[RMDB]
RNA sequence: GGGAACGACUCGAGUAGAGUCGAAAAGCCCACAAGUGGAGGCUUCGAACUCCCACCUGGCCGUCCUCCGGACGGCGGGUCACCGGUCAGGCGGUUCCGUCCCACGGCGGUGACCAGCCCGAAAUCGACCGUUGGUAAUGUUCGCAUUACCAACGGUAAAAGAAACAACAACAACAAC
Reactivity to 2A3 in 0.01 (KOAc 150mM, MgCl2 10mM, bicine 150mM(pH8.5), 24C), signal-to-noise 4, nucleotides 027 to 126: g010c000c090c010a010c050a000a060g060u220g110g010a010g010g000c020u120u080c260g080a030a010c000u030c030c000c000a010c000c000u040g270g000c010c010g010u020c030c060u280c070c230g070g000a010c000g010g000c000g010g010g000u000c000a040c080c050g070g030u070c020a030g020g010c010g010g000u020u010c010c010g020u050c040c080c050a080c190g000g000c000g000g020u040g040a040c000c000a020g000c010c000c010g060a050a030a070u100c060g010
Reactivity to DMS in 0.01 (KOAc 150mM, MgCl2 10mM, bicine 150mM(pH8.5), 24C), signal-to-noise 1, nucleotides 027 to 126: g000c000c000c020a070c150a020a010g000u000g000g000a050g000g000c100u010u050c230g000a170a100c000u000c000c000c000a000c120c120u050g050g020c000c040g030u020c000c000u130c200c300g040g100a110c100g000g000c060g000g020g040u000c160a050c130c030g000g000u000c000a200g000g040c000g000g000u000u000c090c000g000u000c040c090c150a140c190g000g010c000g000g000u000g000a040c000c020a000g020c020c000c040g020a000a150a000u090c140g010